[RMDB]
RNA sequence: GGGAACGACUCGAGUAGAGUCGAAAAGAGUGGGUUAGCGACAACCCUGGCGAGGUGGGCUGUGAUGCCGUCGGACACUAUGCCCGCGUCUGCUGGCCCUACGAGCGCGCCUGGGGCCAGGGCGGGCGACGCACCAGCUAUUCGUAGCUGGUGCGUCAAAAGAAACAACAACAACAAC
Reactivity to 2A3 in 0.01 (KOAc 150mM, MgCl2 10mM, bicine 150mM(pH8.5), 24C), signal-to-noise 3, nucleotides 027 to 126: g150a010g030u130g010g090g020u070u090a060g050c020g050a050c030a070a060c030c000c000u000g050g000c030g020a030g020g060u120g040g000g030c030u030g060u060g060a060u100g030c030c010g050u060c010g030g000a010c030a020c090u090a090u250g000c000c000c000g010c000g040u060c090u170g100c010u010g010g020c000c010c020u030a050c100g070a020g070c050g000c000g010c010c000u020g000g010g000g000c000c000a000g010g020g000c000g000g000g010c000
Reactivity to DMS in 0.01 (KOAc 150mM, MgCl2 10mM, bicine 150mM(pH8.5), 24C), signal-to-noise 2, nucleotides 027 to 126: g000a110g040u020g000g000g000u000u020a060g000c080g000a120c070a140a050c060c010c020u020g000g000c020g000a170g040g010u000g000g020g000c010u020g000u030g030a070u010g000c060c040g040u000c020g000g000a120c090a050c160u020a070u070g020c000c000c000g000c000g000u030c150u010g000c000u000g000g000c000c000c000u000a030c120g000a080g040c040g000c030g020c050c020u010g000g000g000g000c000c010a020g000g000g000c010g000g020g030c000
An RNA of 177 nucleotides, treated with 2A3 and DMS and read out base by base. The DMS profile rests on 3,491 reads. The RNA was probed in 150 mM KOAc, 10 mM MgCl2 and 150 mM bicine (pH 8.5) at 24 C. Source: RMDB library OK1LIB, as collected in RNAgym. 2A3 adducts were read by reverse transcription with SuperScript II with manganese.